Chemical mapping of a 177-nucleotide RNA with 2A3 and DMS. For DMS the reverse transcriptase was MarathonRT. As a SHAPE reagent, 2A3 marks flexible, mostly unpaired nucleotides at the ribose 2'-OH.

RNA sequence: GGGAACGACUCGAGUAGAGUCGAAAAUACCAAUGGUUCGCCAUUGGUACUUGUAUUGACGAAUACUACCGUAGAAGUAUUCAGGUCUGAUAACUACGGAUAUACACUAGAGUUUCGACUCUAGUAACACACACUAUGGUUUCGACCAUAGUGUGUGAAAAGAAACAACAACAACAAC
Reactivity to 2A3 in 0.01 (KOAc 150mM, MgCl2 10mM, bicine 150mM(pH8.5), 24C), signal-to-noise 6, nucleotides 027 to 126: u020a000c000c000a010a000u020g000g030u050u040c190g040c090c010a000u000u010g000g000u010a030c010u070u150g120u110a170u060u230g080a040c050g020a010a020u000a020c010u070a260c010c020g010u020a010g020a150a010g020u000a020u020u030c020a030g080g140u040c120u160g110a120u070a180a110c010u010a000c000g020g000a030u050a020u020a140c060a000c020u000a000g010a010g010u010u100u090c200g070a020c000u000c000u000a000g000u010a020a010
Reactivity to DMS in 0.01 (KOAc 150mM, MgCl2 10mM, bicine 150mM(pH8.5), 24C), signal-to-noise 4, nucleotides 027 to 126: u010a000c000c000a000a000u010g010g010u010u000c220g010c010c010a010u010u000g010g000u000a000c040u000u010g020u000a100u000u000g010a110c100g010a030a010u000a010c010u000a110c000c020g010u010a010g000a170a050g000u000a010u000u000c010a090g020g010u000c070u000g020a070u010a090a150c010u000a010c000g010g010a300u000a070u020a100c190a050c010u000a010g010a010g000u000u000u000c210g000a020c000u000c000u000a000g000u000a050a130
2A3 adducts were read by reverse transcription with SuperScript II with manganese.
For 2A3, 8,332 sequencing reads were counted.
The reactions ran in a buffer of 150 mM KOAc, 10 mM MgCl2 and 150 mM bicine (pH 8.5), at 24 C.
Source: RMDB library M2PK50, as collected in RNAgym.